RNA sequence: GGGAACGACUCGAGUAGAGUCGAAAACGCCGAACAGUCUACGGCGAGCUUAAGCGCUGGGGACGCCCAACGCAUCACAAAGACUGAGUGAUGAACCAGAAGUAUGGACUGGUUGCGUUGGUGGAGACGGUCGGGUCCAGUUCGCUGUCGAGUAGAGCAUAUAGGAUUUCUUCGGAAAUCCUAUAUGAAAAGAAACAACAACAACAAC
Reactivity to DMS in 0.01 (KOAc 150mM, MgCl2 10mM, bicine 150mM(pH8.5), 24C), signal-to-noise 3, nucleotides 027 to 156: c020g010c000c000g020a080a070c000a090g010u000c020u010a300c000g010g030c000g010a190g010c040u000u000a070a140g030c060g040c000u020g000g010g020g020a070c050g010c060c010c020a020a000c020g000c000a040u000c000a040c030a040a060a100g000a110c020u000g010a140g000u000g010a060u000g000a140a050c000c000a040g010a110a170g030u000a190u000g020g010a160c020u000g010g000u000u000g030c000g000u010u000g000g020u000g010g010a200g010a100c040g010g030u010c050g030g030g000u000c000c010a060g010u000u000c080g010c020u000g010u010c030g010a180g000u000a140g000a210g000
Reactivity to 2A3 in 0.01 (KOAc 150mM, MgCl2 10mM, bicine 150mM(pH8.5), 24C), signal-to-noise 4, nucleotides 027 to 156: c010g020c000c000g010a040a030c000a020g020u030c010u030a000c030g000g010c010g010a020g000c010u140u150a090a020g010c010g000c020u020g000g010g010g040a010c010g050c010c010c000a020a010c010g000c010a020u020c000a000c020a030a080a000g020a020c020u020g030a010g020u000g020a060u060g050a030a020c010c010a020g020a150a020g170u170a160u270g070g030a080c010u000g000g000u000u040g000c010g000u000u010g040g020u050g040g050a070g010a020c070g020g040u080c010g020g020g100u000c020c000a010g030u060u100c050g000c040u050g060u090c060g010a020g050u060a040g030a020g060

The data come from the RNA Mapping Database (RMDB), library PDB130. The record gives the reactivity of an RNA of 207 nucleotides to DMS and 2A3. The DMS profile rests on 8,451 reads. For DMS the reverse transcriptase was MarathonRT. The RNA was probed in 150 mM KOAc, 10 mM MgCl2 and 150 mM bicine (pH 8.5) at 24 C.